Annotation:
An RNA of 177 nucleotides, treated with DMS and 2A3 and read out base by base. 2A3 adducts were read by reverse transcription with SuperScript II with manganese. For 2A3, 48,717 sequencing reads were counted. The RNA was probed in 150 mM KOAc, 10 mM MgCl2 and 150 mM bicine (pH 8.5) at 24 C.

[RMDB]
RNA sequence: GGGAACGACUCGAGUAGAGUCGAAAAUAGCAUCACCUUUUCAAUUCAGCUUUCUAUGACGCUAACCAUAUUUUCGUUCUGCUUUUCGCGUCAAAGUAGGAAGAACGAAGGUUUUGACGAGGUGAGCAUAAUAGUCGAUAUUCGUAUCGACUAUUAUAAAAGAAACAACAACAACAAC
Reactivity to DMS in 0.01 (KOAc 150mM, MgCl2 10mM, bicine 150mM(pH8.5), 24C), signal-to-noise 9, nucleotides 027 to 126: u040a090g010c020a090u000c000a010c000c000u000u010u010u010c010a020a020u010u020c040a110g010c060u010u010u010c050u010a060u010g000a030c040g010c010u010a070a150c210c110a100u030a080u030u020u020u010c050g010u000u000c030u000g010c090u000u000u010u010c170g010c030g010u000c040a060a040a160g040u010a030g000g010a030a020g010a060a060c130g020a100a080g010g010u000u000u000u000g000a010c030g000a010g010g010u000g010a020g000c020
Reactivity to 2A3 in 0.01 (KOAc 150mM, MgCl2 10mM, bicine 150mM(pH8.5), 24C), signal-to-noise 9, nucleotides 027 to 126: u140a010g020c040a210u010c000a000c000c000u000u000u010u010c010a010a020u010u020c020a030g060c040u040u060u000c010u030a040u170g020a010c010g000c020u040a060a060c060c050a120u070a220u200u150u090u100c070g040u060u040c040u040g140c040u050u090u060u140c060g000c000g010u030c010a070a070a030g080u050a020g040g040a010a010g010a070a050c120g090a090a100g100g010u010u010u010u010g000a010c010g010a000g000g000u000g000a000g000c000